RNA sequence: GGGAACGACUCGAGUAGAGUCGAAAACGAUUCGGACCGGCUCAUCUCGACAAGAGGCGGCAGUCCUCAGUGCUCUUACUCUUUUCUGUAAAGAGGAGACUGCUGGACUUGCCGCCCAAGUUCGAGCAUGGGCCAAUUCCGAACGAAGGGUCGCGCGGAACGCAUUGCUGUUCGCAGCAAUGCGUUCAAAAGAAACAACAACAACAAC
Reactivity to 2A3 in 0.01 (KOAc 150mM, MgCl2 10mM, bicine 150mM(pH8.5), 24C), signal-to-noise 1, nucleotides 027 to 156: c000g120a160u010u010c000g000g000a000c000c060g030g000c010u000c000a010u000c000u000c030g010a010c010a080a100g170a160g080g000c000g010g000c000a000g000u000c000c000u000c000a090g040u190g190c010u000c020u050u190a220c000u000c000u040u010u150u050c160u300g230u300a000a040a000g000a020g020g020a000g060a000c010u010g070c090u020g000g000a000c040u030u080g010c000c000g000c000c000c010a000a000g000u070u010c030g000a010g030c040a020u000g020g040g000c000c000a000a000u010u000c000c000g010a000a000c000g060a090a040g110g030g040u090c040g010c010g000c200g060
The record gives the reactivity of an RNA of 207 nucleotides to 2A3.
2A3 adducts were read by reverse transcription with SuperScript II with manganese.
The reactions ran in a buffer of 150 mM KOAc, 10 mM MgCl2 and 150 mM bicine (pH 8.5), at 24 C.
It was measured as part of the RMDB library VIROID.